[RMDB]
RNA sequence: GGGAACGACUCGAGUAGAGUCGAAAAGCUCUAGGAGACUAGAGCGAUACGUUAGAGAGCUUGUGGCAUGACUAACGGAUAGCCAGGUACGAGGUUGCCAGAGGACAUAGCUAUAGCUAUGUCCAAAGAGGUAUCUUACGUUCGCGUAAGAUACCUCAAAAGAAACAACAACAACAAC
Reactivity to DMS in 0.01 (KOAc 150mM, MgCl2 10mM, bicine 150mM(pH8.5), 24C), signal-to-noise 3, nucleotides 027 to 126: g010c000u000c000u000a020g000g010a200g000a270c010u000a010g000a020g020c020g020a050u040a070c040g030u000u000a030g000a270g010a170g000c020u000u020g000u070g010g000c000a070u010g000a210c020u000a020a090c020g000g000a050u020a020g030c070c020a150g020g030u040a050c130g010a110g000g000u000u000g000c030c030a080g030a290g010g000a050c000a000u000a000g000c000u010a180u050a140g000c000u000a000u000g010u000c000c000a000a040a100
Reactivity to 2A3 in 0.01 (KOAc 150mM, MgCl2 10mM, bicine 150mM(pH8.5), 24C), signal-to-noise 2, nucleotides 027 to 126: g000c000u010c000u010a050g010g010a080g060a080c000u000a000g000a000g000c000g000a010u010a010c020g010u030u040a020g010a020g000a050g090c000u120u110g110u140g080g010c040a040u070g040a060c000u010a030a010c000g040g030a030u040a040g240c040c030a020g010g020u060a080c130g100a090g070g020u150u020g020c010c010a020g040a070g100g000a000c000a000u000a000g000c000u070a010u040a300g010c000u000a000u010g030u000c010c000a010a010a010